[RMDB]
RNA sequence: GGGAACGACUCGAGUAGAGUCGAAAAGGUCAAAAGCAGGCAUUGCUAUUGCAGGUAGAAAGAAUCAUGUUAAUUAAACAGAGUGCCUAGUUUUGACGCAAAAAGAGAUGGUGAUAGUUAGUGCCUGUGACCAUGAAGAAUUCGUUCUUCAUGGUCAAAAAGAAACAACAACAACAAC
Reactivity to 2A3 in 0.01 (KOAc 150mM, MgCl2 10mM, bicine 150mM(pH8.5), 24C), signal-to-noise 3, nucleotides 027 to 126: g070g000u070c020a000a030a070a010g030c020a010g000g000c000a000u010u040g000c000u020a000u020u020g020c020a010g040g030u080a030g160a120a210a000g080a030a050u070c030a060u030g020u080u100a200a150u100u170a100a090a020c030a000g070a030g110u060g000c000c000u010a030g010u020u030u020u060g010a020c020g050c080a040a080a000a020a030g110a000g010a040u150g070g010u020g020a040u030a020g040u090u060a020g000u000g010c000c000u040g040
Reactivity to DMS in 0.01 (KOAc 150mM, MgCl2 10mM, bicine 150mM(pH8.5), 24C), signal-to-noise 4, nucleotides 027 to 126: g020g010u000c040a030a030a070a190g030c030a020g000g010c000a020u000u000g020c010u000a030u000u000g020c010a030g020g010u000a070g010a130a100a130g010a110a100u000c060a110u010g020u000u000a110a120u010u000a070a050a050c060a040g010a090g020u000g000c000c000u000a100g000u000u000u000u000g000a030c010g000c120a040a030a030a060a070g000a120g000a080u000g010g020u000g000a020u000a030g010u000u010a040g030u000g000c020c000u000g010